[RMDB]
RNA sequence: GGGAACGACUCGAGUAGAGUCGAAAAGCAUUUUUUAAAGGAUGAUGAAAUAAGGCGAUGUCUGAUUAGGGCAAACAUGAUGCAGACAGGAAAUGCAGCAGUUCAGAGGAGGGAAGGUCAGGCCGCCAGUAAGCGUUACAUUCGUGUAACGCUUACUAAAAGAAACAACAACAACAAC
Reactivity to DMS in 0.01 (KOAc 150mM, MgCl2 10mM, bicine 150mM(pH8.5), 24C), signal-to-noise 2, nucleotides 027 to 126: g010c030a020u000u020u050u000u000u000a080a090a150g030g000a030u000g010a070u000g020a080a060a070u010a050a100g020g000c010g010a090u000g010u000c020u020g000a040u000u010a120g020g010g010c100a050a020a030c070a050u000g010a060u000g000c010a040g030a100c180a090g020g000a020a040a080u020g040c020a060g000c040a050g010u000u000c120a100g000a120g010g000a110g000g000g010a060a100g010g000u000c030a020g010g000c000c020g010c020c020
Reactivity to 2A3 in 0.01 (KOAc 150mM, MgCl2 10mM, bicine 150mM(pH8.5), 24C), signal-to-noise 2, nucleotides 027 to 126: g000c010a000u020u000u000u050u190u300a100a090a050g050g030a030u080g010a020u050g120a080a150a110u230a240a040g000g000c020g020a020u150g000u000c000u000g000a030u020u070a040g020g010g000c040a010a020a040c060a100u100g000a000u070g060c020a000g090a150c020a070g050g150a010a080a060u060g000c000a010g000c020a000g010u050u090c040a040g000a020g150g060a070g000g040g000a060a110g070g000u040c000a000g010g000c020c040g010c020c000